[RMDB]
RNA sequence: GGGAACGACUCGAGUAGAGUCGAAAAGAUAUGGACUCUAUGAAGGUCACACAUGUGACCUGGUCGGAAACGACCAAGGUCGAAUGUGACUGGAGAGUCCUAAGUCAAAACCAAGCUUCGGCUUGGACUAAAUAGGAUCGUUCGCGAUCCUAUUUAGAAAAGAAACAACAACAACAAC
Reactivity to DMS in 0.01 (KOAc 150mM, MgCl2 10mM, bicine 150mM(pH8.5), 24C), signal-to-noise 6, nucleotides 027 to 126: g000a050u000a300u010g010g010a020c000u000c000u010a200u020g030a240a190g000g010u000c010a000c000a030c270a090u010g040u000g010a000c000c000u000g010g000u000c000g000g000a110a080a190c000g010a000c000c000a040a060g020g010u000c000g010a150a130u010g010u000g000a020c000u000g000g000a030g010a030g000u000c000c010u000a020a060g010u000c050a090a080a130a230c000c010a000a010g010c010u000u030c220g030g010c000u000u010g000g010a180
Reactivity to 2A3 in 0.01 (KOAc 150mM, MgCl2 10mM, bicine 150mM(pH8.5), 24C), signal-to-noise 5, nucleotides 027 to 126: g020a010u070a060u180g010g000a000c010u000c010u040a300u300g040a030a010g040g010u060c000a000c000a000c000a030u300g170u240g110a000c000c000u000g000g000u000c000g020g010a050a100a050c020g000a000c000c060a110a150g010g000u000c010g000a030a040u060g010u000g010a000c010u010g020g010a010g000a000g020u000c000c000u010a070a020g040u020c030a010a000a100a170c000c000a000a010g000c010u070u250c300g160g000c000u000u010g000g000a110